[RMDB]
RNA sequence: GGGAACGACUCGAGUAGAGUCGAAAAGUUAUGCUCUCGCUGCCUAAUGGCGGUGCGGGAAACCGACUCUAAAGUCCUUAGGGUUAGCCCCUUAAGGCGGGGUUCGGAGGCACCUGGCAACAGAAGCUGAAACUGUGCACAUUCGUGUGCACAGUAAUACAGUCCUAGGAUUCGUCCUAGGACUGUAAAAAGAAACAACAACAACAAC
Reactivity to DMS in 0.01 (KOAc 150mM, MgCl2 10mM, bicine 150mM(pH8.5), 24C), signal-to-noise 1, nucleotides 027 to 156: g020u000u000a100u010g030c010u000c000u000c020g010c000u000g000c020c000u000a090a070u010g000g020c050g020g000u030g010c030g000g000g020a080a080a120c020c000g000a010c000u000c020u000a050a090a160g010u000c010c020u000u000a030g000g000g000u000u000a160g050c170c190c000c000u010u000a010a010g050g100c000g000g000g010g000u010u000c060g020g000a260g020g020c020a080c020c010u000g020g020c020a050a140c060a210g000a020a140g030c010u000g010a140a100a050c000u000g000u010g000c000a030c010a060u000u010c300g050u000g000u000g020c000a000c000a000g000u010a000a140
Reactivity to 2A3 in 0.01 (KOAc 150mM, MgCl2 10mM, bicine 150mM(pH8.5), 24C), signal-to-noise 3, nucleotides 027 to 156: g000u010u070a110u250g040c030u020c010u020c020g010c010u020g020c000c010u300a300a200u260g000g000c040g070g090u030g010c010g020g000g000a020a010a000c010c000g000a030c020u020c040u170a100a070a240g300u060c000c000u000u000a010g000g000g030u020u040a020g000c030c010c000c000u000u030a000a000g000g000c000g000g000g000g010u070u150c090g030g000a050g060g000c000a010c010c000u030g220g010c010a010a000c010a050g010a020a010g000c000u040g010a100a030a010c000u000g000u000g000c010a000c000a000u010u040c150g090u040g000u000g000c000a000c000a000g000u000a000a000
An RNA of 207 nucleotides, treated with DMS and 2A3 and read out base by base. Source: RMDB library M2RFPK, as collected in RNAgym. For DMS, 2,585 sequencing reads were counted. Conditions: 150 mM KOAc, 10 mM MgCl2 and 150 mM bicine (pH 8.5), 24 C. Reactivities are given for positions 27 through 156.